Record summary
An RNA of 177 nucleotides, treated with 2A3 and DMS and read out base by base. The RNA was probed in 150 mM KOAc, 10 mM MgCl2 and 150 mM bicine (pH 8.5) at 24 C. DMS adducts were read by reverse transcription with MarathonRT. Source: RMDB library OK2TRN, as collected in RNAgym. Values cover nucleotides 27 to 126.
RNA sequence: GGGAACGACUCGAGUAGAGUCGAAAAAGGGCAAUUCCUCGAUUUAUGCUAAUGGCGCACGUAUUACGCGCGAACAGCUACAAGAGAUUUCGGCGUUGCUUUUUGAUAUGCACGGGCAACAUGAGCAUGAAUAGGAGCAUUUCGAUGCUCCUAUUCAAAAAGAAACAACAACAACAAC
Reactivity to 2A3 in 0.01 (KOAc 150mM, MgCl2 10mM, bicine 150mM(pH8.5), 24C), signal-to-noise 2, nucleotides 027 to 126: a010g080g010g010c020a030a040u060u040c020c000u000c020g040a030u010u120u130a070u120g010c010u050a100a020u090g070g000c000g000c000a010c000g030u100a150u180u300a070c030g040c000g000c000g040a030a020c050a010g070c040u040a020c070a160a020g040a010g010a150u030u090u090c040g000g000c040g040u040u040g000c000u100u060u040u080u130g100a110u090a030u130g050c030a030c090g000g000g010c040a050a010c010a060u060g030a000g040c040a100
Reactivity to DMS in 0.01 (KOAc 150mM, MgCl2 10mM, bicine 150mM(pH8.5), 24C), signal-to-noise 5, nucleotides 027 to 126: a030g020g010g020c030a050a090u010u000c020c000u000c090g010a150u010u000u010a070u010g000c020u000a050a170u010g000g000c080g020c010a040c090g010u010a150u000u020a060c070g020c020g020c000g020a040a060c150a080g000c030u000a140c230a110a080g000a120g020a110u000u000u010c090g010g010c040g010u000u000g000c020u010u000u000u000u010g010a080u020a050u000g010c050a080c090g000g000g010c050a070a100c060a040u010g010a070g000c080a080